The record gives the reactivity of an RNA of 207 nucleotides to 2A3 and DMS. The RNA was probed in 150 mM KOAc, 10 mM MgCl2 and 150 mM bicine (pH 8.5) at 24 C. Values cover nucleotides 27 to 156. For DMS the reverse transcriptase was MarathonRT.

[RMDB]
RNA sequence: GGGAACGACUCGAGUAGAGUCGAAAACCGUAGGCGUGAUAUUGACUUGGAUUUAUAGACAUGUACACUUCGAAAGAGGUGUACCACUGUCUAUUGUCAGUCAAUAGAGCGCCUAAACGGAAAGGAAACGACGAUGGUUCGCCAUCGUCGUUUCCAAUCACUGGAAACAGUUCGCUGUUUCCAGUGAAAAAGAAACAACAACAACAAC
Reactivity to 2A3 in 0.01 (KOAc 150mM, MgCl2 10mM, bicine 150mM(pH8.5), 24C), signal-to-noise 1, nucleotides 027 to 156: c000c000g010u000a030g000g010c000g010u010g010a030u000a010u020u000g000a000c020u070u180g200g030a040u170u300u090a010u070a010g000a000c000a000u160g000u010a010c010a000c000u000u020c010g010a050a050a020g000a000g010g010u020g000u020a020c000c010a050c010u000g000u000c000u000a000u000u000g000u000c000a000g010u000c010a000a000u000a010g000a010g000c010g000c000c000u010a010a000a000c000g030g030a160a040a100g020g010a000a000a000c000g000a000c000g000a020u000g000g130u080u140c260g000c000c000a000u000c000g000u000c000g010u020u000u000c010c000a000a010
Reactivity to DMS in 0.01 (KOAc 150mM, MgCl2 10mM, bicine 150mM(pH8.5), 24C), signal-to-noise 1, nucleotides 027 to 156: c010c020g000u000a070g010g020c010g020u000g000a300u000a000u020u010g010a040c030u000u000g030g000a050u000u000u000a000u000a000g010a010c030a030u000g000u000a020c000a020c000u000u000c020g020a210a130a300g010a060g040g020u000g020u000a000c020c040a070c170u000g000u000c000u000a000u010u030g020u000c020a050g020u010c000a000a010u000a000g000a300g030c000g050c030c000u000a000a010a050c010g040g000a120a140a120g000g010a000a000a060c060g000a020c010g010a060u000g000g000u010u000c300g030c040c030a040u020c000g000u010c030g010u020u020u000c000c010a030a070